[RMDB]
RNA sequence: GGGAACGACUCGAGUAGAGUCGAAAAGGCGUGGUCCAGCUUGGUGAUGACCACCGCGCGGGGCAUGCCGACCUGGCUGCAUUCCUGCCACAGGGACUUGGUCGGUUCGUCGACGCCCUCGUUGGCCUCCCCAUUGGGAGUUCGCUCCCAAUGGGGAAAAAGAAACAACAACAACAAC
Reactivity to DMS in 0.01 (KOAc 150mM, MgCl2 10mM, bicine 150mM(pH8.5), 24C), signal-to-noise 2, nucleotides 027 to 126: g010g020c040g080u000g010g020u000c020c040a070g020c050u010u010g000g030u000g010a230u020g010a190c170c000a030c020c040g000c300g010c090g000g000g010g020c030a030u010g010c010c000g010a060c030c010u010g000g000c040u000g000c060a160u000u000c020c030u000g000c000c040a030c030a060g000g000g000a130c080u000u020g020g040u000c000g000g000u020u000c180g010u000c010g010a030c030g000c000c010c000u000c170g020u020u000g010g000c030c130
Reactivity to 2A3 in 0.01 (KOAc 150mM, MgCl2 10mM, bicine 150mM(pH8.5), 24C), signal-to-noise 3, nucleotides 027 to 126: g020g000c040g020u020g030g300u060c010c010a000g020c020u040u080g030g030u050g080a230u160g170a120c050c050a040c010c030g000c010g010c020g010g000g000g030c020a000u030g020c010c000g010a030c010c000u010g070g000c060u060g010c030a050u040u090c010c010u020g010c030c000a000c010a040g000g020g040a050c070u190u300g130g030u030c020g020g010u180u150c100g160u090c010g070a020c000g000c000c000c000u010c050g030u070u080g010g000c010c040
Conditions: 150 mM KOAc, 10 mM MgCl2 and 150 mM bicine (pH 8.5), 24 C. An RNA of 177 nucleotides, treated with DMS and 2A3 and read out base by base. The DMS profile rests on 2,069 reads. It was measured as part of the RMDB library OK2TST.